[RMDB]
RNA sequence: GGGAACGACUCGAGUAGAGUCGAAAAACAACACGCUUCGGCGUGUUGUCGACGGAGGAACCUGAGGACGCGCUUGUGCCGCAGCAGGGAAGCGCAGCGUAAAUCAGAGGUGAUUCGUCACCUCUAAAAUAGUUUAUUUCUUCGGAAAUAAACUAUUAAAAGAAACAACAACAACAAC
Reactivity to DMS in 0.01 (KOAc 150mM, MgCl2 10mM, bicine 150mM(pH8.5), 24C), signal-to-noise 6, nucleotides 027 to 126: a020c010a010a010c000a000c000g010c000u000u020c190g040g000c000g040u000g000u000u000g000u000c050g010a070c080g000g000a050g000g000a110a100c030c030u000g010a080g010g010a200c180g010c040g010c030u010u010g030u000g020c030c020g010c050a070g020c080a060g000g000g010a130a050g010c060g020c030a030g010c030g010u010a040a140a120u010c110a020g010a020g010g000u000g000a100u000u010c130g000u000c000a070c030c000u000c020u000a020a050
Reactivity to 2A3 in 0.01 (KOAc 150mM, MgCl2 10mM, bicine 150mM(pH8.5), 24C), signal-to-noise 3, nucleotides 027 to 126: a000c000a010a010c010a000c010g020c010u040u080c200g170g000c010g000u000g000u000u000g000u000c010g000a020c020g010g040a030g050g070a040a040c000c020u030g030a040g030g040a020c050g040c010g000c070u100u120g040u060g040c010c030g040c030a040g050c040a020g040g010g060a030a000g020c020g020c030a010g010c010g050u090a040a070a080u080c040a020g030a020g110g010u030g010a040u010u020c040g010u000c030a010c010c000u020c010u030a030a060